[RMDB]
RNA sequence: GGGAACGACUCGAGUAGAGUCGAAAAUGUACCGCGCUUAAAUUCGCGAAAGUGUAGGUGAUCAAGGAUAAUUUUGGUGGCCAAACGCGCAUUGUAGUUAUCAUUAUGGUAUACAAUUACGUGAUUGCGUAUAAAUUUCAUAUUAUAGCGUUUACCAGACCACAGCAUAAUUCGUUAUGCUGUGGUCAAAAGAAACAACAACAACAAC
Reactivity to 2A3 in 0.01 (KOAc 150mM, MgCl2 10mM, bicine 150mM(pH8.5), 24C), signal-to-noise 5, nucleotides 027 to 156: u150g010u030a040c030c020g010c000g000c010u090u130a070a080a080u200u110c040g010c020g070a160a030a040g040u050g030u120a050g040g030u070g050a040u060c040a040a020g070g020a130u080a190a200u100u130u070u050g020g020u020g010g000c020c000a090a110a010c010g000c010g000c020a000u000u090g010u030a070g030u050u090a020u060c050a070u090u190a130u290g000g000u040a020u000a050c040a010a070u100u020a030c020g020u020g100a150u100u170g000c010g020u070a030u130a090a060a050u110u160u090c050a030u040a040u150u130a060u120a030g020c010g030u040u060u070a080c090c060a030
Reactivity to DMS in 0.01 (KOAc 150mM, MgCl2 10mM, bicine 150mM(pH8.5), 24C), signal-to-noise 2, nucleotides 027 to 156: u000g000u000a150c030c030g000c000g040c040u000u000a060a110a130u010u010c000g020c070g000a060a020a080g060u000g000u000a110g050g020u020g040a100u000c050a110a100g020g020a110u010a080a120u010u010u000u000g040g030u000g030g030c030c000a100a070a070c060g010c020g060c100a030u000u010g030u000a070g010u010u000a060u000c050a120u010u010a140u000g100g020u000a080u000a050c010a040a030u010u000a020c050g000u000g000a170u000u000g020c040g010u010a100u000a060a050a070u000u010u020c070a080u000a080u000u000a090u000a070g050c050g020u000u000u010a070c040c080a300
An RNA of 207 nucleotides, treated with 2A3 and DMS and read out base by base. For DMS, 3,145 sequencing reads were counted. DMS adducts were read by reverse transcription with MarathonRT. The RNA was probed in 150 mM KOAc, 10 mM MgCl2 and 150 mM bicine (pH 8.5) at 24 C.